[RMDB]
RNA sequence: GGGAACGACUCGAGUAGAGUCGAAAAGAUAUGGAGCUCGAAAAAACACGCUUCUACCAUCGGAAACGAUGGUAAUAGAACUACGUGUAUCGAGCUCCUAAGUCAAAGCAAUCGUUCGCGAUUGCAACGAUAAGUAGGGCUUCGGCCCUACUUAUCGAAAAGAAACAACAACAACAAC
Reactivity to DMS in 0.01 (KOAc 150mM, MgCl2 10mM, bicine 150mM(pH8.5), 24C), signal-to-noise 2, nucleotides 027 to 126: g000a020u000a280u010g000g000a000g040c000u000c000g010a000a080a080a160a030a020c010a010c030g040c300u020u000c040u000a010c000c000a030u000c010g010g010a090a080a100c010g040a010u000g000g000u020a040a040u010a020g000a050a050c250u010a130c070g010u000g020u000a090u000c010g020a030g010c000u000c000c000u000a000a060g010u010c060a100a150a220g030c000a000a010u000c010g030u000u030c140g010c030g000a000u000u000g000c010a010a100
Reactivity to 2A3 in 0.01 (KOAc 150mM, MgCl2 10mM, bicine 150mM(pH8.5), 24C), signal-to-noise 2, nucleotides 027 to 126: g040a010u030a030u040g020g010a020g000c000u010c010g120a090a080a050a000a140a050c020a000c050g280c070u010u000c000u020a010c000c000a000u000c010g010g010a030a040a000c030g010a000u000g000g050u000a000a010u040a000g010a050a010c070u300a100c300g030u020g010u030a070u050c000g000a010g000c000u000c000c000u000a000a000g000u000c010a000a020a110g010c010a020a010u010c000g050u080u110c270g020c030g180a000u000u000g000c010a000a000
This 177-nucleotide RNA was probed chemically with DMS and 2A3. Conditions: 150 mM KOAc, 10 mM MgCl2 and 150 mM bicine (pH 8.5), 24 C. Reactivities are given for positions 27 through 126.